[RMDB]
RNA sequence: GGGAACGACUCGAGUAGAGUCGAAAAGAAAGAAAGAACCCUUCCCGCGGGGCUGGAUCUUCCAGAUGGAGCGGGCCGGGACAAGCCGGAGAGUGUCCCGGUUUCAGAAACAACCUUCGGCAGCCAAACUAGACUACCCACUUCGGUGGGUAGUCAACCCAUGUGUUAUGUUCGCAUAACACAUGGGAAAAGAAACAACAACAACAAC
Reactivity to 2A3 in 0.01 (KOAc 150mM, MgCl2 10mM, bicine 150mM(pH8.5), 24C), signal-to-noise 1, nucleotides 027 to 156: g010a000a010a000g040a040a080a020g060a190a200c050c000c000u010u000c000c000c000g030c010g010g000g000g030c000u010g000g020a100u120c130u180u020c200c010a010g000a020u000g010g010a010g000c000g000g000g000c000c000g000g000g000a010c000a000a010g010c030c000g020g010a000g000a000g010u000g020u010c000c000c000g000g010u050u020u000c000a000g040a020a010a010c040a010a010c020c000u000u000c000g020g020c000a030g060c080c090a060a070a100c080u140a060g000a000c000u000a010c000c000c000a000c020u060u060c140g120g010u040g000g000g000u000a000g000u000c000a000a000